[RMDB]
RNA sequence: GGGAACGACUCGAGUAGAGUCGAAAACAUGAGAGGAAGGAGAAAAGCAGGAUGCCUGGCUCAUGUCGCUCUCUCAGGCUGAAUCUUCAUUCAUGAUGGUGUUGGCACCGUCUUCCUACAUCUGCGGGGGAAGCAGCACCGAUACCUCUCUAAAUUAGACCUGAUUAAUAUUCGUAUUAAUCAGGUCAAAAGAAACAACAACAACAAC
Reactivity to 2A3 in 0.01 (KOAc 150mM, MgCl2 10mM, bicine 150mM(pH8.5), 24C), signal-to-noise 7, nucleotides 027 to 156: c050a070u150g000a010g000a000g020g040a140a050g040g020a060g030a030a080a010a020g110c170a020g020g040a040u060g000c000c010u020g030g000c040u050c120a130u160g080u100c030g020c030u030c000u020c010u020c020a010g010g000c010u040g040a040a040u000c020u060u040c040a090u070u040c040a050u170g080a060u140g020g040u000g010u040u050g090g020c080a070c100c070g060u020c000u040u020c010c010u090a160c020a160u120c080u160g060c100g020g020g000g000g000a020a020g030c000a000g000c010a000c000c010g020a030u090a080c000c000u000c000u010c010u090a030a080a060u180u220a020
Reactivity to DMS in 0.01 (KOAc 150mM, MgCl2 10mM, bicine 150mM(pH8.5), 24C), signal-to-noise 4, nucleotides 027 to 156: c060a100u000g000a030g000a080g030g000a130a070g010g020a120g010a080a070a060a120g040c100a100g000g010a160u010g000c020c010u000g000g010c020u000c020a060u000g010u000c030g000c040u010c010u000c010u000c010a010g020g010c020u000g000a190a170u000c030u000u000c030a210u000u000c050a120u010g030a110u020g010g010u000g030u000u000g010g000c040a070c010c030g030u000c020u000u000c010c000u000a070c050a140u000c120u020g020c110g000g020g020g000g010a060a020g020c020a030g010c020a080c020c010g000a090u000a040c010c000u000c050u000c010u010a040a060a110u010u010a200
Conditions: 150 mM KOAc, 10 mM MgCl2 and 150 mM bicine (pH 8.5), 24 C. Structure probing data (2A3 and DMS) for a 207-nucleotide construct. For DMS, 11,140 sequencing reads were counted. Values cover nucleotides 27 to 156. DMS adducts were read by reverse transcription with MarathonRT. For 2A3 the reverse transcriptase was SuperScript II with manganese.